[RMDB]
RNA sequence: GGGAACGACUCGAGUAGAGUCGAAAAGAUUGCAUUACCUUGCCAGGCUGACUCGACUCCUGGUCAAAGACUGUUGUGACUAUACCGUCAAUAGCAUUCAGAGUGUAAGUUGCCAGGAUAGUACCUAUCCUCCAAUGCUGUUCGCAGCAUUGGAGGAAAAAGAAACAACAACAACAAC
Reactivity to DMS in 0.01 (KOAc 150mM, MgCl2 10mM, bicine 150mM(pH8.5), 24C), signal-to-noise 2, nucleotides 027 to 126: g000a140u000u000g010c040a170u000u010a090c060c090u000u010g020c050c060a060g000g000c170u000g010a120c030u000c060g010a100c150u000c010c030u000g040g000u000c090a040a100a130g020a080c010u000g020u010u000g010u000g000a060c020u040a100u000a030c170c090g000u000c070a050a040u000a030g040c040a050u010u000c110a080g010a100g000u000g030u010a010a100g020u010u000g010c020c010a050g010g000a040u000a020g010u000a050c070c010u000a160
An RNA of 177 nucleotides, treated with DMS and read out base by base. Source: RMDB library OK2TST, as collected in RNAgym. The DMS profile rests on 1,143 reads. The reactions ran in a buffer of 150 mM KOAc, 10 mM MgCl2 and 150 mM bicine (pH 8.5), at 24 C.